Description: Chemical mapping of a 207-nucleotide RNA with DMS. For DMS, 2,944 sequencing reads were counted. It was measured as part of the RMDB library RNAMAK. The RNA was probed in 150 mM KOAc, 10 mM MgCl2 and 150 mM bicine (pH 8.5) at 24 C.

RNA sequence: GGGAACGACUCGAGUAGAGUCGAAAAGCGUACUACACGACCGAAGAACAAAUUUGUCAGGUUUAAUGGGUGAACUGCGGAGGAGUGUCCCAAAUAGGACACUUGAAACAGUUCACCCAUUAAACCUUGGAUUUAAUUUGGGAGGUCGUGUAUCGCACAUAUCACCAACGUUCGCGUUGGUGAUAUGAAAAGAAACAACAACAACAAC
Reactivity to DMS in 0.01 (KOAc 150mM, MgCl2 10mM, bicine 150mM(pH8.5), 24C), signal-to-noise 1, nucleotides 027 to 156: g010c050g100u030a100c030u010a040c000a030c020g000a000c000c000g000a150a220g040a140a180c010a010a030a040u000u000u020g000u000c000a020g000g000u000u010u000a000a020u000g030g030g000u000g010a010a010c020u000g030c000g010g010a300g010g010a010g000u000g020u000c000c000c020a050a080a260u000a040g010g020a000c010a010c000u000u020g020a300a100a000c000a010g000u000u000c000a000c000c000c000a000u000u000a000a000a010c000c000u010u010g020g010a060u000u010u010a030a010u000u000u000g010g040g000a230g000g030u000c000g020u010g000u000a000u000c020g000c000a300